[RMDB]
Conditions: 150 mM KOAc, 10 mM MgCl2 and 150 mM bicine (pH 8.5), 24 C. This 207-nucleotide RNA was probed chemically with DMS and 2A3.

RNA sequence: GGGAACGACUCGAGUAGAGUCGAAAAGAAUAAUGUGUGAUUAUUUUUCAUUAAAAUUGUUAUUUCAGUGUAACAUAUAACAUACAGAAAAAUGCUCAAGUCAUACAGUAACAAUUUGAUAAAUUUUAGUAGUGUGAAUACACCUUACAUGCCUCAAGCCAUUAUUAAAUUUCGAUUUAAUAAUGGCAAAAGAAACAACAACAACAAC
Reactivity to DMS in 0.01 (KOAc 150mM, MgCl2 10mM, bicine 150mM(pH8.5), 24C), signal-to-noise 1, nucleotides 027 to 156: g020a140a080u000a090a010u010g030u020g000u010g020a120u020u000a060u000u000u020u020u000c000a090u000u010a160a030a060a120u000u020g000u010u000a040u010u000u010c020a220g030u000g020u010a020a070c050a040u000a100u000a050a090c030a030u030a300c090a220g020a010a070a080a090a050u000g030c040u000c100a100a200g040u010c000a070u020a030c010a170g000u020a020a030c020a030a030u000u000u000g020a110u000a000a040a100u000u000u000u050a080g000u010a090g040u000g050u000g010a200a070u010a060c040a030c030c020u000u000a000c040a040u000g000c000c020u000c000a010a300
Reactivity to 2A3 in 0.01 (KOAc 150mM, MgCl2 10mM, bicine 150mM(pH8.5), 24C), signal-to-noise 1, nucleotides 027 to 156: g050a050a170u120a060a000u040g000u000g050u010g020a000u000u170a060u030u040u010u010u000c010a010u110u300a020a040a210a110u100u000g000u000u000a010u020u000u090c110a120g130u080g000u190a130a000c000a000u190a000u030a120a060c000a000u160a110c060a000g060a020a000a000a000a000u050g000c020u030c160a020a020g030u010c000a000u000a030c000a000g060u040a080a030c060a110a050u000u080u050g060a060u130a140a150a190u060u120u070u090a040g050u010a000g000u010g020u030g110a070a100u160a060c020a000c000c000u000u100a000c000a000u170g090c000c130u080c010a000a130

The 2A3 profile rests on 962 reads.